[RMDB]
RNA sequence: GGGAACGACUCGAGUAGAGUCGAAAAGAUGGAUGAACAAUGAUGAACUAAUCUAUAUUUUAAGUUGAAAUCAAUUACUUCAAACUACAAAAUAUAGGAUUAGUCUGUCCAUUUUUAUUCAUCAGUUGAUCAUUAUGCCAUUCGUGGCAUAAUGAUCAAAAGAAACAACAACAACAAC
Reactivity to 2A3 in 0.01 (KOAc 150mM, MgCl2 10mM, bicine 150mM(pH8.5), 24C), signal-to-noise 3, nucleotides 027 to 126: g010a000u000g000g000a000u000g000a000a010c040a060a000u000g010a030u060g010a080a000c000u010a010a010u000c000u000a000u000a010u000u000u000u020a070a030g000u000u000g010a010a010a040u100c100a080a160u220u120a140c030u010u010c010a080a080a060c010u100a080c080a020a000a010a000u000a000u020a010g090g050a020u010u000a000g010u000c010u020g020u050c030c020a010u000u000u000u000u000a000u000u000c000a000u000c010a010g070u040u010

The data come from the RNA Mapping Database (RMDB), library RFM100. Chemical mapping of a 177-nucleotide RNA with 2A3. For 2A3 the reverse transcriptase was SuperScript II with manganese.